[RMDB]
RNA sequence: GGGAACGACUCGAGUAGAGUCGAAAAAUCGAAGGCACGCCGCGAGGCGCCCCGACGAUUCGCCGAGAAGCCUCUGUUCGAAAUCAUCGGGAGUGAUCCAGAUGACGGUCCUGCCAUGAGACCGCAAUCCAUGCAAAUCAUUCGUGAUUUGCAUGGAAAAAGAAACAACAACAACAAC
Reactivity to 2A3 in 0.01 (KOAc 150mM, MgCl2 10mM, bicine 150mM(pH8.5), 24C), signal-to-noise 5, nucleotides 027 to 126: a010u060c040g020a080a000g020g000c030a010c070g000c000c000g020c020g020a090g000g000c010g000c000c010c000c000g040a030c010g000a020u020u030c040g000c020c030g030a030g030a130a040g030c010c000u010c030u040g040u050u080c040g030a040a060a090u020c010a000u010c000g020g010g020a100g030u060g020a080u040c010c010a030g020a090u050g050a090c000g000g010u030c020c010u020g050c010c020a150u110g010a020g010a050c010c000g040c030a000a020
Reactivity to DMS in 0.01 (KOAc 150mM, MgCl2 10mM, bicine 150mM(pH8.5), 24C), signal-to-noise 5, nucleotides 027 to 126: a020u010c020g000a150a140g000g030c140a100c150g010c010c000g030c180g010a150g000g020c010g010c120c300c010c020g000a210c030g010a040u010u000c030g030c170c060g000a070g000a100a140g020c110c020u000c020u020g010u000u010c040g020a020a070a130u010c020a050u000c000g010g000g000a040g000u040g000a080u000c010c020a030g010a030u020g000a080c030g010g000u000c010c060u000g000c060c070a100u020g000a170g000a070c030c000g000c140a110a070